[RMDB]
RNA sequence: GGGAACGACUCGAGUAGAGUCGAAAAUGAGCGACGUCCGCCGCAGCGCCGGAUGGCUGGCCGACAAGCUGACCGACCAGGACCGCCGGCUAAGCCUCGUCGAGUCCCGCAAGCCGGGCCUAGCGCAGUCCUCGAUCGAGGACGGCGCGAUCGAGGAUGCGUAUAGUUAGUUCGCUAACUAUACGCAAAAAGAAACAACAACAACAAC
Reactivity to DMS in 0.01 (KOAc 150mM, MgCl2 10mM, bicine 150mM(pH8.5), 24C), signal-to-noise 2, nucleotides 027 to 156: u000g030a130g010c010g020a020c060g020u000c080c000g000c020c040g000c040a190g000c080g010c030c020g020g000a090u000g000g010c000u000g010g030c030c010g000a140c060a190a160g010c150u000g110a140c030c010g030a030c010c020a070g040g000a150c050c050g000c010c020g030g010c010u010a040a060g010c000c010u000c070g050u000c010g000a200g030u000c000c000c000g030c040a100a080g010c060c040g060g020g020c030c030u000a070g000c020g000c020a050g010u000c000c010u000c030g000a170u000c120g050a050g010g020a020c020g000g030c020g010c010g010a030u000c030g000a070g010g020a220
Reactivity to 2A3 in 0.01 (KOAc 150mM, MgCl2 10mM, bicine 150mM(pH8.5), 24C), signal-to-noise 1, nucleotides 027 to 156: u230g010a040g030c030g070a040c070g100u040c020c040g000c000c020g030c080a030g070c030g000c050c000g010g050a110u170g050g050c020u010g000g020c000c010g020a060c070a180a050g100c150u090g020a060c060c020g020a030c000c020a010g030g060a060c010c010g010c000c010g040g000c040u060a130a000g000c010c010u040c010g000u000c000g030a010g110u090c050c000c000g010c090a190a040g050c090c020g000g020g000c000c030u030a020g030c000g010c010a000g000u000c010c000u010c010g190a260u160c250g010a030g020g020a030c030g000g000c030g000c010g010a000u090c030g000a000g010g010a020